[RMDB]
RNA sequence: GGGAACGACUCGAGUAGAGUCGAAAAUUAGAUUUGAUUUGAGAUCUUGAGUCACCAGGCAGUCCCAAUUUUUUUUACGAAAUAUUAGGAGUGUGCUGAUGUCAGCAUAGAUGAUGUAUUAUACAUGAAGGUACGAUUUUUUCGAAAAUCGUACCUUAAAAGAAACAACAACAACAAC
Reactivity to DMS in 0.01 (KOAc 150mM, MgCl2 10mM, bicine 150mM(pH8.5), 24C), signal-to-noise 3, nucleotides 027 to 126: u010u040a070g010a150u010u010u000g000a070u010u020u020g010a130g040a060u000c020u010u040g010a160g000u010c030a100c040c030a030g000g040c010a030g010u010c000c020c050a010a030u000u000u000u000u000u000u000u000a100c110g000a030a040a010u040a060u000u010a100g030g020a070g000u000g020u000g010c010u000g020a180u030g000u000c040a060g020c050a020u010a030g000a080u000g020a040u000g010u000a030u040u000a090u030a090c080a040u000g020
Reactivity to 2A3 in 0.01 (KOAc 150mM, MgCl2 10mM, bicine 150mM(pH8.5), 24C), signal-to-noise 2, nucleotides 027 to 126: u300u090a100g050a080u000u000u130g040a000u070u000u050g220a070g000a050u040c000u000u050g030a100g050u000c000a010c200c000a000g120g120c030a000g130u050c000c000c040a000a020u050u010u000u000u000u000u000u090a020c050g050a000a030a000u230a060u130u080a110g180g000a010g020u070g080u020g030c040u000g000a120u270g200u050c010a000g010c000a070u060a130g170a030u080g010a000u000g120u050a090u190u150a080u110a060c080a050u060g060
The record gives the reactivity of an RNA of 177 nucleotides to DMS and 2A3.